[RMDB]
An RNA of 207 nucleotides, treated with 2A3 and read out base by base.
2A3 adducts were read by reverse transcription with SuperScript II with manganese.
The data come from the RNA Mapping Database (RMDB), library M2RFPK.
RNA sequence: GGGAACGACUCGAGUAGAGUCGAAAAUACCGCAGGCCUGCGGUGCGGCAGUGUGGAGACCUGCCGUAAGCCGUGUUGUUUUGACAACCGGGAGAAAGCGUAGGCGGAGGCAGCGCUUUCAGGGUCUAAAAGUAUGGGAUCUUCGGAUCCCAUACAAGGUCUGAAUAUCGUUCGCGAUAUUCAGACCAAAAGAAACAACAACAACAAC
Reactivity to 2A3 in 0.01 (KOAc 150mM, MgCl2 10mM, bicine 150mM(pH8.5), 24C), signal-to-noise 2, nucleotides 027 to 156: u120a000c010c000g030c040a030g010g020c010c020u040g010c010g010g000u010g030c010g010g000c000a020g000u060g000u090g280g070a080g050a090c000c000u000g000c000c000g000u000a020a000g040c000c020g100u120g000u140u010g020u010u100u140u300g150a020c030a020a020c010c000g000g010g000a010g000a000a000a000g000c000g000u020a090g090g120c110g000g050a090g060g050c000a000g000c000g000c010u000u000u000c000a020g000g000g000u000c010u000a030a080a030a100g000u000a000u000g000g010g010a000u010c000u020u000c050g060g000a000u000c000c000c010a000u000a000c000a000a000